[RMDB]
RNA sequence: GGGAACGACUCGAGUAGAGUCGAAAAGUACUAGCGUUCGCGCUAGUACAAAGAAUGAAAGAUAGUCUGAGCGCACAGACUAGCGCAAAAGAAAGAAAGAAAAAAUCCCACUCUUCGGAGUGGGAAACACGGAUACUUACUUCGGUAAGUAUCCGUGAAAAGAAACAACAACAACAAC
Reactivity to DMS in 0.01 (KOAc 150mM, MgCl2 10mM, bicine 150mM(pH8.5), 24C), signal-to-noise 1, nucleotides 027 to 126: g010u000a000c000u000a010g000c000g010u000u000c160g010c020g040c010u000a000g010u000a010c000a090a050a090g030a110a070u070g010a060a080a100g020a070u000a000g030u000c000u000g000a130g000c200g010c250a070c090a110g000a020c060u000a050g010c030g000c220a110a040a080a010g010a050a060a100g000a090a120a100g010a010a010a040a050a130a100u000c010c050c000a000c010u000c000u000u010c100g000g000a000g000u000g000g000g000a000a010a020